Chemical mapping of a 207-nucleotide RNA with 2A3 and DMS. The DMS profile rests on 3,698 reads. Conditions: 150 mM KOAc, 10 mM MgCl2 and 150 mM bicine (pH 8.5), 24 C. It was measured as part of the RMDB library OK3TST. DMS adducts were read by reverse transcription with MarathonRT. The 2A3 profile rests on 1,053 reads.
RNA sequence: GGGAACGACUCGAGUAGAGUCGAAAAUCCCAAAGGUUGCCGAAUCCGAAAGGUAGGGAGGAACCGCUUUUUGGGGUUAAUCUGCAGUGAAGCUGCAGUAGGGAUACCUUCUGUCCCGCACCCGACAGCUAACUCCCAAGGCAAUAAAGGAAGGAGACAUUAUGCCUAGUUUCGACUAGGCAUAAUGAAAAGAAACAACAACAACAAC
Reactivity to 2A3 in 0.01 (KOAc 150mM, MgCl2 10mM, bicine 150mM(pH8.5), 24C), signal-to-noise 2, nucleotides 027 to 156: u000c000c000c010a090a050a000g090g010u040u000g000c000c000g030a040a050u110c010c000g050a090a040a020g030g020u060a040g000g000g000a010g000g050a080a110c110c020g010c030u050u110u040u040u180g060g010g000g000u000u030a060a050u020c000u000g000c000a010g030u060g300a140a020g140c000u000g000c010a010g020u010a030g000g020g000a000u040a070c000c020u040u040c020u030g020u000c000c010c010g000c000a050c010c000c020g050a110c110a020g000c000u010a010a040c000u000c010c010c000a000a010g000g000c020a020a000u200a050a040a010g050g010a010a050g000g020a100g020a010
Reactivity to DMS in 0.01 (KOAc 150mM, MgCl2 10mM, bicine 150mM(pH8.5), 24C), signal-to-noise 2, nucleotides 027 to 156: u000c000c000c000a060a060a100g000g020u000u000g000c030c010g000a160a300u020c010c020g020a130a170a100g010g010u000a080g010g020g040a130g000g000a130a090c120c110g020c080u000u000u000u000u020g050g000g000g030u000u020a090a110u010c030u010g000c010a090g020u010g010a130a180g030c010u000g030c000a050g000u000a040g020g010g010a080u000a060c060c070u010u000c040u020g010u000c060c000c010g030c100a140c020c000c000g000a050c100a060g000c010u010a150a200c030u010c000c010c030a090a120g010g020c020a070a090u000a030a100a080g000g020a070a010g020g000a300g000a250